[RMDB]
RNA sequence: GGGAACGACUCGAGUAGAGUCGAAAACCAAGAGUGGCGUUAAUGACAUUUGUAUGUUUGAGAAUAAAACCACUUUGCCUACUAAUAUAGCUUUUGAACUCUAUGCUAAGCGUGCUGUACGCUCGCACACUCGUCUAAAGUUCGCUUUAGACGAGUGAAAAGAAACAACAACAACAAC
Reactivity to DMS in 0.01 (KOAc 150mM, MgCl2 10mM, bicine 150mM(pH8.5), 24C), signal-to-noise 3, nucleotides 027 to 126: c020c040a200a080g000a030g000u000g000g010c100g010u000u000a100a080u000g000a060c030a020u000u010u010g020u000a060u000g020u010u010u000g000a170g000a130a120u020a060a080a140a080c010c020a020c000u000u000u000g010c060c040u010a120c140u000a090a100u010a090u000a040g010c060u010u000u000u010g000a070a110c080u000c060u010a040u010g010c040u000a040a090g010c040g030u000g010c090u010g010u000a080c080g010c030u010c180g000c020a190
Reactivity to 2A3 in 0.01 (KOAc 150mM, MgCl2 10mM, bicine 150mM(pH8.5), 24C), signal-to-noise 5, nucleotides 027 to 126: c000c000a000a010g030a000g020u010g010g000c040g040u070u100a050a050u120g020a020c020a030u090u190u300g240u130a080u040g040u000u040u080g090a080g040a070a060u100a100a060a010a000c000c000a000c000u040u010u030g040c010c010u060a090c030u040a070a160u190a060u020a100g010c020u070u080u040u110g050a080a040c010u000c030u070a040u120g010c020u030a070a030g000c000g020u010g010c030u070g030u080a030c050g010c020u020c000g000c000a020